An RNA of 177 nucleotides, treated with 2A3 and DMS and read out base by base.
RNA sequence: GGGAACGACUCGAGUAGAGUCGAAAAACACCGAUCUUCGGAUCGGUGUAAAUAAAUUCAGCGGUUUAAAUUUCCAGCGCAUAACCGCUGAUGCGCUCGAAAAAACAGUUAGGUUCGCCUAACUGAACAUCUCUGACGGAUUCGUCCGUCAGAGAUGAAAAGAAACAACAACAACAAC
Reactivity to 2A3 in 0.01 (KOAc 150mM, MgCl2 10mM, bicine 150mM(pH8.5), 24C), signal-to-noise 1, nucleotides 027 to 126: a000c000a000c000c000g020a000u030c000u020u050c150g140g010a000u000c000g050g070u000g000u000a000a000a000u030a000a010a010u120u040c010a000g020c010g080g130u100u210u200a070a160a180u170u160u080c050c060a070g110c020g020c000a010u040a080a090c010c000g000c000u000g000a000u000g000c020g040c000u040c000g260a150a040a000a030a030a040c020a000g000u000u000a000g040g010u020u030c180g000c030c000u010a000a000c000u000g000a010a020
Reactivity to DMS in 0.01 (KOAc 150mM, MgCl2 10mM, bicine 150mM(pH8.5), 24C), signal-to-noise 1, nucleotides 027 to 126: a140c000a000c000c000g010a000u000c000u030u000c150g000g000a030u000c000g020g000u000g010u010a010a040a030u000a060a070a100u000u010c000a010g080c030g040g000u000u000u000a040a140a090u000u000u000c050c040a130g000c080g010c090a030u000a050a080c000c000g000c000u000g000a010u000g000c110g000c020u010c150g010a030a000a050a120a040a140c010a000g000u000u000a000g010g000u000u020c200g040c010c000u000a010a000c000u000g000a010a080
Source: RMDB library M2PK50, as collected in RNAgym. For 2A3 the reverse transcriptase was SuperScript II with manganese.